[RMDB]
RNA sequence: GGGAACGACUCGAGUAGAGUCGAAAAGUCUGGGCAAAGUAGGCUGUUUUUAAUAGUACUAACUUAAUCCACUGAUGGCUAUAUAGAAGCAUUGUGUAAUCCCCGAGCACCUCUGUGGUGUAUUGGAGGAUGUUUUCCUUUUCGAAGGAAAACAUCCAAAAGAAACAACAACAACAAC
Reactivity to DMS in 0.01 (KOAc 150mM, MgCl2 10mM, bicine 150mM(pH8.5), 24C), signal-to-noise 2, nucleotides 027 to 126: g000u000c030u010g000g010g000c180a100a090a030g030u000a020g000g000c010u000g010u000u000u020u020u050a030a070u020a020g000u000a080c040u000a040a090c070u000u000a110a160u010c020c020a100c160u010g000a070u010g020g000c050u000a060u000a110u010a050g010a070a040g010c080a020u010u020g010u010g000u000a070a120u000c000c020c000c020g000a060g000c010a020c000c000u020c230u040g010u000g000g000u010g000u000a020u000u010g000g010a300
Reactivity to 2A3 in 0.01 (KOAc 150mM, MgCl2 10mM, bicine 150mM(pH8.5), 24C), signal-to-noise 3, nucleotides 027 to 126: g010u020c020u020g000g020g040c080a080a000a000g020u010a010g020g000c010u000g060u000u000u000u030u170a080a040u050a020g040u040a250c010u070a230a000c000u040u040a020a020u050c010c010a010c030u040g050a060u030g040g000c020u000a020u020a010u050a300g110a120a000g050c000a010u000u120g030u010g020u090a050a040u050c000c000c010c000g000a000g000c000a000c030c000u060c160u190g260u220g020g000u030g000u020a300u010u100g020g010a050